Chemical mapping of a 177-nucleotide RNA with 2A3 and DMS.
For 2A3 the reverse transcriptase was SuperScript II with manganese.
The data come from the RNA Mapping Database (RMDB), library OK1LIB.
For DMS, 5,882 sequencing reads were counted.
Conditions: 150 mM KOAc, 10 mM MgCl2 and 150 mM bicine (pH 8.5), 24 C.
RNA sequence: GGGAACGACUCGAGUAGAGUCGAAAAUAAAUACCAUCCGCAUCCGGAAUCUCUCCUGCCAUUGGGCUGAAAAAUUCGACUUCAGCUCCGCAAUCUCUGAAGGCGUCGAACAUAUCCGGGUAAUAGAGACUCAUAUAGUGUUCGCACUAUAUGAGUCAAAAGAAACAACAACAACAAC
Reactivity to 2A3 in 0.01 (KOAc 150mM, MgCl2 10mM, bicine 150mM(pH8.5), 24C), signal-to-noise 7, nucleotides 027 to 126: u060a000a070a020u130a040c020c020a060u060c040c060g070c060a040u030c010c010g020g040a060a060u020c040u000c020u010c060c040u070g050c020c020a060u090u180g030g000g000c010u020g100a010a020a010a020a050u230u170c050g070a050c050u010u000c010a000g000c000u020c040c020g020c020a090a150u060c070u020c040u200g070a080a040g060g000c020g010u050c030g050a070a020c010a070u110a100u090c000c010g000g000g000u000a020a010u070a060g170a000
Reactivity to DMS in 0.01 (KOAc 150mM, MgCl2 10mM, bicine 150mM(pH8.5), 24C), signal-to-noise 4, nucleotides 027 to 126: u030a040a070a100u010a100c040c030a060u040c050c050g000c110a040u000c020c050g030g000a070a050u010c100u020c050u000c040c030u020g020c030c050a150u020u030g030g000g010c020u000g000a000a060a090a090a170u020u050c170g000a070c090u000u000c000a040g010c050u000c010c110g000c120a070a070u000c060u030c090u040g000a100a050g000g010c020g010u020c070g030a030a040c240a120u000a100u000c000c020g000g000g010u010a030a080u020a090g010a300